[RMDB]
RNA sequence: GGGAACGACUCGAGUAGAGUCGAAAAUGUGCUGGGCCACCGGUGUGGGUGCAGGCGGGAAGGAAUGUGCCUAGCGGGUGUGGCGAGGAGUGUAGCCAGCUGUGGGUUUUUCUUGGGGCCCAGAGAGCAAGAGAUUGGGGUUCGCCCCAAUCUCUUGAAAAGAAACAACAACAACAAC
Reactivity to DMS in 0.01 (KOAc 150mM, MgCl2 10mM, bicine 150mM(pH8.5), 24C), signal-to-noise 2, nucleotides 027 to 126: u040g000u020g010c010u010g000g010g030c000c000a150c000c010g000g000u020g040u030g000g020g000u030g030c110a080g040g040c070g030g000g000a150a070g000g000a090a050u030g010u000g000c000c020u000a090g000c050g000g010g010u040g010u000g040g000c020g000a080g020g010a180g040u020g020u010a180g000c010c010a090g020c030u000g000u010g000g000g000u000u020u000u000u040c120u010u010g010g020g010g000c000c010c000a050g010a120g000a200g000
Reactivity to 2A3 in 0.01 (KOAc 150mM, MgCl2 10mM, bicine 150mM(pH8.5), 24C), signal-to-noise 3, nucleotides 027 to 126: u280g010u050g010c000u000g000g010g000c030c000a130c120c020g040g010u090g030u120g130g040g020u060g010c010a030g060g040c060g010g000g010a040a080g030g030a080a040u130g030u050g040c010c000u060a050g020c020g020g010g000u160g010u040g040g000c040g030a090g030g010a070g090u050g030u100a020g010c020c020a020g010c030u050g030u060g020g010g020u020u090u000u060u020c080u030u140g020g000g020g000c000c000c000a000g010a000g000a010g020
The record gives the reactivity of an RNA of 177 nucleotides to DMS and 2A3. Conditions: 150 mM KOAc, 10 mM MgCl2 and 150 mM bicine (pH 8.5), 24 C. For DMS the reverse transcriptase was MarathonRT.